[RMDB]
RNA sequence: GGGAACGACUCGAGUAGAGUCGAAAAGAUAUGGAUCCGCAAGCUUUUGACGCGGUGCAUGUCGGAAACGACAUUCUUCGCGAUAAGCUUGGGAUCCUAAGUCAAACUAUGCACUUCGGUGCAUAGAUCAUCAAGACUCCUUCGGGAGUCUUGAUGAAAAAGAAACAACAACAACAAC
Reactivity to DMS in 0.01 (KOAc 150mM, MgCl2 10mM, bicine 150mM(pH8.5), 24C), signal-to-noise 1, nucleotides 027 to 126: g000a050u020a300u000g000g010a000u010c000c010g000c000a020a000g010c000u010u000u020u010g020a170c150g030c000g010g060u000g000c080a020u020g040u010c000g010g000a120a110a240c020g010a010c000a030u000u000c000u000u000c000g040c010g010a120u000a000a030g000c000u020u010g020g010g020a010u000c000c000u010a020a150g000u010c020a220a190a300c000u000a020u000g020c010a020c010u000u010c180g030g000u020g000c000a000u010a010g000a190